[RMDB]
RNA sequence: GGGAACGACUCGAGUAGAGUCGAAAAGAUAAUUGGUAACUGCGGUUAGCUGAAAAGCUAGUGCCGCCAAGCUACCAUCUGUAGGAUUAUGGCUGAACGCCUCUAAGUCAGAAUCCAUGCUGGAAUAGCUAAAGUCGAUUUUCGAAUCGACUUUAGCAAAAGAAACAACAACAACAAC
Reactivity to 2A3 in 0.01 (KOAc 150mM, MgCl2 10mM, bicine 150mM(pH8.5), 24C), signal-to-noise 4, nucleotides 027 to 126: g100a040u220a060a150u120u070g010g000u010a020a010c000u010g000c010g000g020u070u010a000g000c000u030g040a120a030a010a000g000c000u010a010g060u040g180c020c000g000c020c010a020a000g010c000u000a000c010c010a030u040c020u080g100u100a050g000g010a010u010u010a010u070g010g010c000u010g020a160a010c080g090c050c010u000c000u010a020a000g030u000c000a000g010a020a000u000c000c010a110u080g010c010u080g050g080a180a140u110a140
Reactivity to DMS in 0.01 (KOAc 150mM, MgCl2 10mM, bicine 150mM(pH8.5), 24C), signal-to-noise 3, nucleotides 027 to 126: g000a160u010a080a070u010u030g020g020u000a000a020c030u010g010c000g010g000u000u010a000g010c000u010g000a120a130a140a010g010c000u010a000g000u030g030c000c000g020c040c170a050a030g010c050u000a010c000c010a040u010c080u010g000u010a080g010g010a010u010u000a080u020g020g010c010u000g000a150a130c110g010c030c020u000c030u010a140a040g010u010c000a010g000a030a010u000c000c000a060u010g010c060u010g010g000a070a080u030a110